[RMDB]
Source: RMDB library OK1LIB, as collected in RNAgym. This 177-nucleotide RNA was probed chemically with DMS and 2A3. The 2A3 profile rests on 3,008 reads. The DMS profile rests on 3,270 reads. Conditions: 150 mM KOAc, 10 mM MgCl2 and 150 mM bicine (pH 8.5), 24 C. DMS adducts were read by reverse transcription with MarathonRT. For 2A3 the reverse transcriptase was SuperScript II with manganese.

RNA sequence: GGGAACGACUCGAGUAGAGUCGAAAACGCGGUCAGGUUGCUGGCAAACGCGUCCAUGGUGGUCUGGCCGGCGCGGUCGCCGGACGCGAGCCAGAAUCGCAAUUCGCUGAUGGCGUACAGGCCGGGCGUCAUCCUAUCACUUCGGUGAUAGGAUGACAAAAGAAACAACAACAACAAC
Reactivity to DMS in 0.01 (KOAc 150mM, MgCl2 10mM, bicine 150mM(pH8.5), 24C), signal-to-noise 2, nucleotides 027 to 126: c010g000c020g040g030u000c040a040g000g000u020u000g020c040u000g010g000c020a080a050a300c000g000c010g000u010c000c000a060u070g000g030u000g030g030u000c020u000g020g010c000c000g000g020c000g000c140g000g000u000c020g020c000c020g000g000a040c030g020c000g070a090g000c000c010a010g000a080a100u000c300g000c200a110a160u000u040c030g000c030u020g000a080u020g000g030c000g000u000a130c190a090g020g020c010c000g000g000g000c120
Reactivity to 2A3 in 0.01 (KOAc 150mM, MgCl2 10mM, bicine 150mM(pH8.5), 24C), signal-to-noise 4, nucleotides 027 to 126: c030g040c030g030g040u020c010a010g010g060u060u070g160c000u010g010g000c030a140a020a040c010g000c000g000u010c000c000a140u230g000g020u020g010g020u060c040u060g060g060c040c000g030g000c090g020c040g010g010u010c010g000c000c000g000g000a010c000g000c000g030a020g020c010c000a010g000a020a070u170c040g000c050a020a140u130u050c060g010c120u020g000a020u030g220g000c010g000u040a030c060a050g110g040c000c000g010g010g000c020